[RMDB]
RNA sequence: GGGAACGACUCGAGUAGAGUCGAAAAUACUUGACCACGAGGGCUCCCCUAUAGUCUGCUUUGGCGGUGCGGCAGGCCCCGUGCGAUAGGCUAACUGCGGUAUUCCCCGCACUCCGUCGAGCGGUUACUCAAAGUUCUACUUCGGUAGAACUUUGAGAAAAGAAACAACAACAACAAC
Reactivity to DMS in 0.01 (KOAc 150mM, MgCl2 10mM, bicine 150mM(pH8.5), 24C), signal-to-noise 1, nucleotides 027 to 126: u030a170c050u000u000g000a300c300c000a010c010g000a080g010g020g000c010u050c030c300c010c030u000a060u010a130g000u000c040u000g030c000u000u050u000g040g040c000g040g000u000g000c160g000g030c070a070g000g000c070c020c000c030g030u000g010c050g010a020u000a000g000g020c060u000a080a100c080u000g020c000g000g010u000a250u000u000c000c030c000c010g000c000a080c150u000c020c060g010u000c020g000a090g000c010g010g000u010u000a080
Chemical mapping of a 177-nucleotide RNA with DMS. DMS adducts were read by reverse transcription with MarathonRT. The RNA was probed in 150 mM KOAc, 10 mM MgCl2 and 150 mM bicine (pH 8.5) at 24 C. It was measured as part of the RMDB library RFMREP.